[RMDB]
RNA sequence: GGGAACGACUCGAGUAGAGUCGAAAAUAUACAUGAGAAGUCAGCACAGCUCCCGACUCGCGGUGUGCGAUGCUACGUCGCGCGAGCGACGUAGCUGCUGUGCAGACGGCUAGCAAAAGCUAGCCAAGACCAUUAUCAUCUUCGGAUGAUAAUGGUCAAAAGAAACAACAACAACAAC
Reactivity to 2A3 in 0.01 (KOAc 150mM, MgCl2 10mM, bicine 150mM(pH8.5), 24C), signal-to-noise 5, nucleotides 027 to 126: u140a000u060a030c120a090u230g050a110g060a300a050g020u030c010a000g000c000a000c000a000g000c010u010c030c000c020g040a030c040u030c000g010c050g170g300u300g070u190g140c000g000a010u060g000c010u010a000c000g000u000c000g000c010g000c050g060a050g030c000g000a000c000g000u010a000g010c000u000g000c000u000g000u000g010c010a000g010a020c030g010g000c000u000a000g000c000a060a140a300a070g010c000u000a000g000c000c000a010a020
Reactivity to DMS in 0.01 (KOAc 150mM, MgCl2 10mM, bicine 150mM(pH8.5), 24C), signal-to-noise 2, nucleotides 027 to 126: u110a060u020a170c130a190u000g000a060g000a150a200g000u000c000a050g010c010a030c030a020g000c000u000c000c030c010g000a120c280u000c000g050c000g010g050u020g030u030g030c000g000a050u020g000c000u040a010c020g020u000c010g040c010g000c290g000a300g040c000g050a060c030g040u010a030g000c070u020g010c000u000g020u000g020c010a110g000a050c020g030g040c000u000a000g010c000a160a020a100a040g010c000u000a010g000c020c000a100a020
Structure probing data (2A3 and DMS) for a 177-nucleotide construct. For DMS, 2,257 sequencing reads were counted. For 2A3 the reverse transcriptase was SuperScript II with manganese. For DMS the reverse transcriptase was MarathonRT. The 2A3 profile rests on 3,989 reads. The reactions ran in a buffer of 150 mM KOAc, 10 mM MgCl2 and 150 mM bicine (pH 8.5), at 24 C.